The data come from the RNA Mapping Database (RMDB), library OK2TST. Structure probing data (2A3 and DMS) for a 177-nucleotide construct. For 2A3 the reverse transcriptase was SuperScript II with manganese. The reactions ran in a buffer of 150 mM KOAc, 10 mM MgCl2 and 150 mM bicine (pH 8.5), at 24 C. For DMS, 3,627 sequencing reads were counted.
RNA sequence: GGGAACGACUCGAGUAGAGUCGAAAAACGCGCGGUGCUGAUGGGUGUGCUGAUUGUGAUCACGGGGUUGAUCGGCUCCUUCGUAUUCUCGUUGAUUCGGCCCAAUGGGCAGGCGGGUAGCAACGCGGUGUGCGUAUAACUUCGGUUAUACGCACACAAAAGAAACAACAACAACAAC
Reactivity to 2A3 in 0.01 (KOAc 150mM, MgCl2 10mM, bicine 150mM(pH8.5), 24C), signal-to-noise 3, nucleotides 027 to 126: a000c080g030c000g000c030g000g010u020g020c040u060g020a060u110g010g010g020u110g050u060g060c050u000g010a140u100u110g070u120g090a050u070c030a020c100g090g030g010g000u080u060g060a050u040c020g050g000c020u050c010c030u080u070c030g010u050a100u150u070c070u040c020g040u020u080g010a090u130u110c030g030g000c020c030c020a070a140u180g010g030g000c030a020g030g020c050g030g000g020u020a020g010c020a030a020c050g020c000g050
Reactivity to DMS in 0.01 (KOAc 150mM, MgCl2 10mM, bicine 150mM(pH8.5), 24C), signal-to-noise 3, nucleotides 027 to 126: a120c120g000c060g000c050g020g020u000g030c060u010g000a120u000g000g000g010u000g020u000g010c060u010g000a120u000u010g020u020g010a060u000c040a060c160g000g000g020g010u000u000g000a050u000c080g020g000c060u010c020c050u000u010c040g010u000a100u010u000c010u010c020g000u010u000g000a160u000u000c130g000g000c010c020c030a120a090u020g000g000g020c040a090g000g010c080g000g000g000u000a050g000c060a040a050c050g020c040g020